Description
Conditions: 150 mM KOAc, 10 mM MgCl2 and 150 mM bicine (pH 8.5), 24 C. This 177-nucleotide RNA was probed chemically with 2A3 and DMS.

RNA sequence: GGGAACGACUCGAGUAGAGUCGAAAAGGCAAGUUCGACACCUCUGAUGAAGGCAUCCGCAAGAUGGCCAUCGACGGCAUAGGUUACACUGCCGGCCUCGGCUUCACCGCCGACAUGUGGGGCGUGAAGUGCUACGAUACUUCGGUAUCGUAGCACUAAAAGAAACAACAACAACAAC
Reactivity to 2A3 in 0.01 (KOAc 150mM, MgCl2 10mM, bicine 150mM(pH8.5), 24C), signal-to-noise 1, nucleotides 027 to 126: g030g010c060a000a120g030u090u130c030g010a000c020a010c020c010u000c050u070g100a120u160g030a030a000g040g000c010a040u050c000c030g160c060a030a070g020a040u070g150g100c010c000a070u080c050g110a130c050g010g000c040a040u090a160g040g000u010u030a040c050a000c110u030g000c000c000g000g060c000c010u040c030g000g010c000u070u060c020a010c040c050g020c010c020g000a040c030a030u260g080u140g010g020g000g000c000g010u040g030a060
Reactivity to DMS in 0.01 (KOAc 150mM, MgCl2 10mM, bicine 150mM(pH8.5), 24C), signal-to-noise 2, nucleotides 027 to 126: g050g000c020a060a130g020u000u020c120g020a070c170a050c030c020u000c070u010g020a180u020g000a090a100g020g000c020a040u010c080c060g000c170a060a240g000a020u000g010g000c000c010a050u000c060g000a110c090g000g040c140a110u010a000g040g010u000u020a100c090a070c000u000g060c020c010g000g010c070c090u000c020g000g000c000u000u000c190a050c200c170g000c020c010g000a030c150a050u000g010u000g040g000g000g000c070g000u000g000a080
Notes: For 2A3, 1,119 sequencing reads were counted. The DMS profile rests on 1,135 reads.